[RMDB]
RNA sequence: GGGAACGACUCGAGUAGAGUCGAAAACAAAAAGCGUCCUACUCGCGAUAGUAGUAAACAAAAAGACUUGCAUUGUCAAGAAUGCUAAACAAAAAGCCUAGUACUGGCAAGAGUACGAAACAACAAAGGGAUAGUAAUACUUCGGUAUUACUAUCCCAAAAGAAACAACAACAACAAC
Reactivity to DMS in 0.01 (KOAc 150mM, MgCl2 10mM, bicine 150mM(pH8.5), 24C), signal-to-noise 2, nucleotides 027 to 126: c050a120a070a100a080a190g060c010g010u010c040c020u010a000c000u000c040g010c040g010a060u010a050g000u000a000g000u010a050a090a110c250a050a050a070a090a040g010a140c140u030u010g000c000a130u000u000g000u020c300a160a090g000a030a010u000g020c000u000a080a060a120c160a040a020a030a030a040g000c060c130u000a080g000u000a010c020u000g000g010c050a100a120g010a040g000u000a000c090g000a250a010a010c180a020a070c250a010a110a040
Reactivity to 2A3 in 0.01 (KOAc 150mM, MgCl2 10mM, bicine 150mM(pH8.5), 24C), signal-to-noise 3, nucleotides 027 to 126: c100a000a130a090a000a000g100c030g010u000c000c010u020a060c000u000c000g060c070g090a220u040a030g100u030a000g030u030a020a170a090c060a100a120a060a000a000g100a030c000u000u030g000c000a090u030u180g060u220c080a000a000g040a140a050u090g020c040u110a110a070a080c040a090a060a070a030a000g000c020c000u040a040g000u020a000c010u000g010g010c080a070a000g020a010g060u010a000c030g010a070a040a150c040a000a060c070a040a140a100
The record gives the reactivity of an RNA of 177 nucleotides to DMS and 2A3.
The data come from the RNA Mapping Database (RMDB), library OK1LIB.
The RNA was probed in 150 mM KOAc, 10 mM MgCl2 and 150 mM bicine (pH 8.5) at 24 C.
As a SHAPE reagent, 2A3 marks flexible, mostly unpaired nucleotides at the ribose 2'-OH.
For DMS the reverse transcriptase was MarathonRT.